This 207-nucleotide RNA was probed chemically with DMS and 2A3. The reactions ran in a buffer of 150 mM KOAc, 10 mM MgCl2 and 150 mM bicine (pH 8.5), at 24 C. The DMS profile rests on 4,721 reads.
RNA sequence: GGGAACGACUCGAGUAGAGUCGAAAAGCGCAAAUCCACAAACGCCAACGAUGAGCGUUUCGCUGUAGCCGCUUAAGGCAACAGCCGGGGCCGACUGAGCCCUGUUACCAAAGACGGCUGGCGGGGGUAAUUACUUAUUGCUUCGGCAAUAAGUAAAUAGUGUAUACACAUUCGUGUGUAUACACUAAAAAGAAACAACAACAACAAC
Reactivity to DMS in 0.01 (KOAc 150mM, MgCl2 10mM, bicine 150mM(pH8.5), 24C), signal-to-noise 2, nucleotides 027 to 156: g010c000g000c020a050a060a090u000c010c030a030c040a040a300a050c020g020c000c010a080a180c080g020a120u000g000a260g000c000g010u000u000u000c050g040c000u010g010u000a050g010c000c010g030c200u010u000a110a230g010g050c000a040a020c020a050g000c040c020g010g000g030g000c020c020g000a150c130u000g010a160g010c000c010c000u000g010u000u000a050c010c030a060a090a200g020a060c030g010g010c070u000g020g020c020g000g020g000g070g020u030a080a110u000u000a010c000u000u000a010u010u000g000c010u010u010c300g030g020c000a020a000u000a000a000g000u000a000a020a170
Reactivity to 2A3 in 0.01 (KOAc 150mM, MgCl2 10mM, bicine 150mM(pH8.5), 24C), signal-to-noise 4, nucleotides 027 to 156: g020c040g040c100a060a040a070u090c050c010a070c050a080a070a030c030g000c000c010a080a050c100g170a200u150g040a040g040c010g020u020u060u050c050g000c010u050g050u160a020g000c010c010g040c150u160u140a130a100g000g000c020a040a020c000a060g020c020c010g010g000g000g000c000c010g130a150c140u150g020a020g030c000c000c000u010g020u030u070a020c010c010a000a060a030g050a070c050g010g020c030u020g030g000c000g000g000g000g000g000u030a040a100u070u000a010c000u000u010a000u010u000g000c000u010u030c120g100g000c000a000a010u000a000a000g000u000a000a000a000